[RMDB]
RNA sequence: GGGAACGACUCGAGUAGAGUCGAAAAGAAAGAAAGAAAUUAGCUCGCCAGUUAGCGAGGUCUGUCCCCACACGACAGAUAGUCGGGUGCAACUCCCGCCCCUUUUCCGAGGGUCAUCGGAACCAAAAAAACUCAGGCAACUUCGGUUGCCUGAGAACACAUAGUGUGAGUUCGCUCACACUAUGUGAAAAGAAACAACAACAACAAC
Reactivity to DMS in 0.01 (KOAc 150mM, MgCl2 10mM, bicine 150mM(pH8.5), 24C), signal-to-noise 1, nucleotides 027 to 156: g040a130a040a040g020a070a060a100g010a100a150a170u000u010a210g040c010u000c010g040c020c010a280g010u000u000a110g000c000g020a020g010g010u000c010u000g030u020c000c020c000c300a070c120a200c260g030a000c000a050g020a010u030a110g040u000c060g040g000g010u000g010c030a200a300c010u060c000c000c000g000c010c000c000c000u000u000u000u000c000c040g000a050g000g000g000u000c010a020u000c030g000g000a000a100c180c080a000a000a070a090a020a070a130c010u020c000a000g020g050c000a010a010c020u000u030c280g000g000u000u010g000c000c000u000g010a000g000a000a080
Reactivity to 2A3 in 0.01 (KOAc 150mM, MgCl2 10mM, bicine 150mM(pH8.5), 24C), signal-to-noise 3, nucleotides 027 to 156: g040a010a050a010g080a030a110a020g070a060a110a050u180u090a090g020c000u010c010g020c030c030a150g170u190u160a010g010c010g000a000g000g010u000c000u010g010u000c030c030c050c000a080c010a010c090g010a000c000a000g020a010u040a010g030u080c010g000g020g000u010g000c000a000a010c020u010c000c000c010g010c000c000c000c000u110u140u050u030c000c000g000a000g010g010g020u080c020a010u010c000g000g010a000a010c030c020a020a070a030a010a010a020a050c000u010c000a000g000g000c000a000a010c010u060u110c180g050g000u000u000g000c000c000u000g000a000g000a000a000